The record gives the reactivity of an RNA of 177 nucleotides to 2A3 and DMS.
The data come from the RNA Mapping Database (RMDB), libraries RFM100 and RFMREP.
[RMDB]
RNA sequence: GGGAACGACUCGAGUAGAGUCGAAAAACCCGAGGUUUCCAGGGCAACGUGUUUCGUCCCUGGGUUAGCCGGGACCUAAGCCGAGGCCGAGAGGCGUAGGCGAUGGACAUCAGGUUAAUAAUCCUGAUGAGACAUUUGAGUUCGCUCAAAUGUCUCAAAAAGAAACAACAACAACAAC
Reactivity to 2A3 in 0.01 (KOAc 150mM, MgCl2 10mM, bicine 150mM(pH8.5), 24C), signal-to-noise 3, nucleotides 027 to 126: a000c020c010c000g020a080g000g010u030u050u000c000c000a020g010g020g000c100a120a020c060g030u120g190u040u120u080c280g070u300c010c000c000u010g010g020g000u030u040a000g010c000c000g010g000g060a100c000c010u020a150a000g000c000c000g030a030g030g070c000c000g070a060g020a050g040g000c000g000u000a000g000g000c000g000a000u000g000g020a000c010a060u020c060a010g000g010u020u000a060a000u090a060a050u090c000c000u050g000a050
Reactivity to DMS in 0.01 (KOAc 150mM, MgCl2 10mM, bicine 150mM(pH8.5), 24C), signal-to-noise 4, nucleotides 027 to 126: a060c000c000c000g000a110g020g010u010u010u010c020c000a000g000g000g010c300a070a050c090g020u010g010u000u010u010c000g010u010c000c000c000u000g020g000g010u020u010a020g010c020c000g000g000g030a110c010c000u000a140a300g020c000c010g000a220g000g000c000c000g000a180g010a260g000g000c000g010u010a300g010g010c000g020a130u010g000g000a130c060a080u030c000a060g010g020u010u000a030a050u030a100a090u020c000c000u030g000a120
The reactions ran in a buffer of 150 mM KOAc, 10 mM MgCl2 and 150 mM bicine (pH 8.5), at 24 C. For 2A3 the reverse transcriptase was SuperScript II with manganese.